[RMDB]
RNA sequence: GGGAACGACUCGAGUAGAGUCGAAAAAAGCGCCUUGUCUCCCCAAUUUUAACUUGAAAAGCAUGGGAACAUCAGAAGUCGCUUGCUACUAGGCUUCAAGGGGUAGGUACCUGGUGGACUGUUAACCCACGGGUCACAUAUUCGUAUGUGACCCGUGAAAAGAAACAACAACAACAAC
Reactivity to DMS in 0.01 (KOAc 150mM, MgCl2 10mM, bicine 150mM(pH8.5), 24C), signal-to-noise 1, nucleotides 027 to 126: a010a070g010c080g000c080c020u000u010g000u000c040u000c020c000c030c090a060a070u010u000u010u010a040a180c140u010u010g000a050a080a080a070g050c130a080u010g000g000g000a010a030c040a000u040c220a090g000a070a060g010u010c040g060c040u000u000g010c150u030a090c070u000a070g010g010c050u010u010c100a100a040g010g000g010g010u030a020g000g010u000a080c050c050u000g010g000u010g010g000a060c050u040g000u000u030a040a110c060c000
The data come from the RNA Mapping Database (RMDB), library OK2TST. Structure probing data (DMS) for a 177-nucleotide construct. The DMS profile rests on 709 reads. High DMS reactivity at an A or C suggests that its Watson-Crick edge is free. Reactivities are rounded to 0.1 and cut off at 0 and 3.